[RMDB]
RNA sequence: GGGAACGACUCGAGUAGAGUCGAAAAACACCAAAACUGAAAACGGAAGGCAAUCCUUCCACGACGAUACUUACUUUACUUUGAUCGUCGUUACUACUGGCAUAGCCACAAAGGAGAACAAACAUGAGCGCGGACACUGACUUCGGUCAGUGUCCAAUCAGGAAAAGCUGUUCGCAGCUUUUCCUGAAAAAGAAACAACAACAACAAC
Reactivity to 2A3 in 0.01 (KOAc 150mM, MgCl2 10mM, bicine 150mM(pH8.5), 24C), signal-to-noise 2, nucleotides 027 to 156: a000c060a030c070c070a050a050a000a070c060u170g030a080a100a000a100c100g040g020a000a010g000g000c100a030a300u300c000c020u000u010c000c000a000c000g000a000c000g000a020u190a250c030u070u030a020c000u140u300u060a010c030u060u050u070g000a010u010c000g000u000c000g000u040u020a040c040u050a070c020u000g000g000c040a230u070a170g040c000c000a070c050a110a100a070g040g020a090g050a070a060c070a140a120a000c000a080u300g030a010g070c200g000c050g050g020a000c000a000c000u000g000a000c000u020u040c220g020g000u000c000a000g000u000g000u000c000c000a000a000